[RMDB]
The record gives the reactivity of an RNA of 177 nucleotides to 2A3 and DMS.
The RNA was probed in 150 mM KOAc, 10 mM MgCl2 and 150 mM bicine (pH 8.5) at 24 C.
For DMS the reverse transcriptase was MarathonRT.
RNA sequence: GGGAACGACUCGAGUAGAGUCGAAAAUGAGAAGCAUUCGUGCUUCUCAGAAAUGCUGCCCAAAGAGGACCUGGGGGUGUCUGGGCUGCUAUACUCAUCAGCUAACCGCGAUCUUCGGAUCGCGGAAGUGGUUACUUGGAUUCGUCCAAGUAACCACAAAAGAAACAACAACAACAAC
Reactivity to 2A3 in 0.01 (KOAc 150mM, MgCl2 10mM, bicine 150mM(pH8.5), 24C), signal-to-noise 2, nucleotides 027 to 126: u030g000a020g010a030a010g000c020a000u080u150c270g080u060g000c000u000u000c010u030c020a010g050a000a080a010u150g000c040u050g000c000c000c000a070a180a010g180a070g070g000a020c040c060u140g110g050g000g000g020u040g050u020c030u050g040g020g010c000u030g010c000u030a010u040a110c030u050c050a180u020c040a060g080c050u060a080a080c010c000g020c010g000a000u020c010u070u010c210g130g000a010u020c000g020c000g030g000a000a000
Reactivity to DMS in 0.01 (KOAc 150mM, MgCl2 10mM, bicine 150mM(pH8.5), 24C), signal-to-noise 1, nucleotides 027 to 126: u020g000a000g010a020a000g020c010a020u010u010c200g030u000g030c000u030u000c000u040c000a020g030a070a070a130u020g010c080u000g020c000c000c040a080a150a130g000a130g000g010a050c040c090u010g010g040g000g020g030u020g010u000c040u000g000g000g000c020u000g000c030u000a130u040a080c040u020c100a090u010c160a180g030c150u030a070a190c000c010g000c000g010a000u000c000u000u010c220g000g000a000u000c000g050c020g000g000a000a020
As a SHAPE reagent, 2A3 marks flexible, mostly unpaired nucleotides at the ribose 2'-OH. The 2A3 profile rests on 1,629 reads. It was measured as part of the RMDB library M2PK50. In probing experiments dimethyl sulfate is read out at A N1 and C N3, which are open when not base-paired.